[RMDB]
RNA sequence: GGGAACGACUCGAGUAGAGUCGAAAAAAACUUCAACCAGUAUGAGGCGAUGAGUUGUGACUUCAAUGGAGGCAAAAUCAGUGUGCAAUAUAAUCUCAGCCAUGCUUAUGCAGUUGAUGCUGCCGAACAUGCCUUGUUCUUUCGAGAACAAGGCAUGAAAAGAAACAACAACAACAAC
Reactivity to DMS in 0.01 (KOAc 150mM, MgCl2 10mM, bicine 150mM(pH8.5), 24C), signal-to-noise 2, nucleotides 027 to 126: a000a000a020c030u020u040c030a010a130c190c020a050g030u000a040u010g000a050g000g000c080g020a040u000g030a180g030u000u000g000u050g020a090c070u000u030c050a070a130u020g000g000a170g000g000c010a000a060a170a050u010c050a050g000u000g020u010g010c030a040a070u060a060u020a070a070u050c030u030c060a060g030c000c050a050u000g000c080u020u010a000u000g040c010a120g010u010u000g000a060u030g000c090u000g000c010c020g000a100a120
Reactivity to 2A3 in 0.01 (KOAc 150mM, MgCl2 10mM, bicine 150mM(pH8.5), 24C), signal-to-noise 2, nucleotides 027 to 126: a030a000a000c010u030u020c000a040a070c020c020a050g060u080a180u030g000a010g080g050c150g080a020u030g040a000g020u070u050g020u070g060a030c020u000u000c070a040a030u140g070g000a060g010g000c070a120a180a040a100u060c090a110g130u130g040u070g200c000a000a030u040a020u030a240a060u020c060u000c030a000g020c070c000a060u160g000c000u070u050a060u120g000c000a040g020u070u020g000a020u050g100c100u030g030c000c000g010a000a000
Conditions: 150 mM KOAc, 10 mM MgCl2 and 150 mM bicine (pH 8.5), 24 C.
Structure probing data (DMS and 2A3) for a 177-nucleotide construct.
It was measured as part of the RMDB library OK1LIB.